[RMDB]
Structure probing data (2A3 and DMS) for a 177-nucleotide construct. It was measured as part of the RMDB libraries RFM100 and RFMREP. For DMS the reverse transcriptase was MarathonRT. Reactivities are given for positions 27 through 126. The RNA was probed in 150 mM KOAc, 10 mM MgCl2 and 150 mM bicine (pH 8.5) at 24 C.

RNA sequence: GGGAACGACUCGAGUAGAGUCGAAAAUGAGGCAUCGUAAUUGUUUGGUCUGCCCUUGACAAGUGGUGUUGAAGGUUGGGUCUUGCGCAAUGGGAACCUGUGAACCAUGUCAGGUCCGGAAGGAAGCCAGUUCUCACUGAUUCGUCAGUGAGAACUGAAAAGAAACAACAACAACAAC
Reactivity to 2A3 in 0.01 (KOAc 150mM, MgCl2 10mM, bicine 150mM(pH8.5), 24C), signal-to-noise 3, nucleotides 027 to 126: u150g020a010g040g020c000a060u030c070g080u090a120a050u060u060g080u060u110u140g020g000u000c010u030g020c000c010c000u040u050g010a050c020a110a120g050u020g090g060u040g040u090u050g010a090a030g030g020u050u040g000g000g000u000c000u020u030g050c030g000c030a030a080u040g070g020g010a070a080c000c000u000g040u040g060a040a050c040c010a050u110g070u070c010a000g010g020u020c000c030g060g000a060a020g100g020a090a000g060c000
Reactivity to DMS in 0.01 (KOAc 150mM, MgCl2 10mM, bicine 150mM(pH8.5), 24C), signal-to-noise 2, nucleotides 027 to 126: u000g030a070g010g010c050a080u000c070g010u000a110a120u020u010g000u000u000u000g000g010u000c010u000g000c020c000c030u000u000g000a040c080a050a120g040u010g020g020u020g030u000u000g010a060a080g000g000u010u010g000g000g010u000c070u000u000g000c050g030c060a050a070u010g000g010g020a070a030c030c010u000g000u010g010a060a110c110c070a070u010g000u010c010a060g010g000u000c000c020g000g010a110a080g010g010a090a150g020c090